RNA sequence: GGGAACGACUCGAGUAGAGUCGAAAAGAAUAUCCCUACCAUAAAUUGAGGGAUGGACAUAUAUUGUUUCAGUACUGGUACGGGUCGCAGCAACUUAACGUCGAAGUAUUGGUUAGGAAACUCAGCGCGUUGGGUAAUAUUUCGAUAUUACCCAACGAAAAGAAACAACAACAACAAC
Reactivity to 2A3 in 0.01 (KOAc 150mM, MgCl2 10mM, bicine 150mM(pH8.5), 24C), signal-to-noise 5, nucleotides 027 to 126: g020a040a030u060a000u070c020c000c000u050a160c050c020a140u180a300a260a120u250u220g050a040g000g020g020a010u030g030g010a030c070a030u270a010u050a040u110u150g040u050u020u040c030a030g050u040a030c020u030g000g020u020a020c040g010g030g080u100c030g020c050a050g000c040a060a080c020u100u160a110a030c060g080u060c030g110a060a010g030u040a040u080u060g020g030u030u040a040g000g080a040a030a020c060u080c070a040g080c070g000
Reactivity to DMS in 0.01 (KOAc 150mM, MgCl2 10mM, bicine 150mM(pH8.5), 24C), signal-to-noise 7, nucleotides 027 to 126: g010a080a230u000a070u000c000c000c000u010a100c140c090a150u010a050a110a140u010u010g010a050g000g010g010a030u000g000g000a300c070a060u020a080u000a080u010u010g020u000u000u000c020a080g010u000a050c050u010g010g030u000a050c080g030g000g010u000c060g030c080a060g020c080a060a090c120u010u010a050a070c090g010u000c050g010a080a100g000u010a060u010u000g010g000u000u000a050g010g010a050a060a090c040u000c070a090g010c140g020